[RMDB]
Chemical mapping of a 177-nucleotide RNA with DMS and 2A3. Reactivities are given for positions 27 through 126. The 2A3 profile rests on 1,266 reads. The reactions ran in a buffer of 150 mM KOAc, 10 mM MgCl2 and 150 mM bicine (pH 8.5), at 24 C. The DMS profile rests on 925 reads. In probing experiments dimethyl sulfate is read out at A N1 and C N3, which are open when not base-paired.
RNA sequence: GGGAACGACUCGAGUAGAGUCGAAAACAGUGAGACUUCGGUCUCACUGAAAUGACUAUGCACCAUGACGAGGACGAAGAUGCGGAGGAGGACGAGGAACAAAAACAGCAAGGUUCGCCUUGCUGAACGGCGAGAAUAUGUUCGCAUAUUCUCGCCGAAAAGAAACAACAACAACAAC
Reactivity to DMS in 0.01 (KOAc 150mM, MgCl2 10mM, bicine 150mM(pH8.5), 24C), signal-to-noise 1, nucleotides 027 to 126: c020a020g000u010g020a010g020a020c000u000u000c120g030g030u000c000u000c000a000c000u000g000a010a040a060u000g000a080c050u010a100u000g020c010a090c060c020a050u020g000a080c050g000a030g000g010a110c060g010a020a030g020a040u000g020c060g000g030a090g000g020a060g020g000a070c060g000a070g000g000a030a090c110a040a020a060a060a110c010a010g000c010a020a040g000g010u000u000c270g000c000c000u000u000g020c010u000g000a040a110
Reactivity to 2A3 in 0.01 (KOAc 150mM, MgCl2 10mM, bicine 150mM(pH8.5), 24C), signal-to-noise 1, nucleotides 027 to 126: c000a000g000u020g000a000g000a010c020u020u100c240g210g000u000c000u010c000a000c000u000g000a000a000a000u090g010a020c060u060a060u230g020c050a010c040c020a110u070g040a060c060g000a030g070g000a020c000g030a100a050g070a050u090g060c060g060g060a010g040g050a030g000g020a020c010g010a050g030g060a000a060c070a050a100a030a000a020c010a000g000c020a000a000g020g000u060u060c150g020c000c000u000u000g000c010u000g000a040a000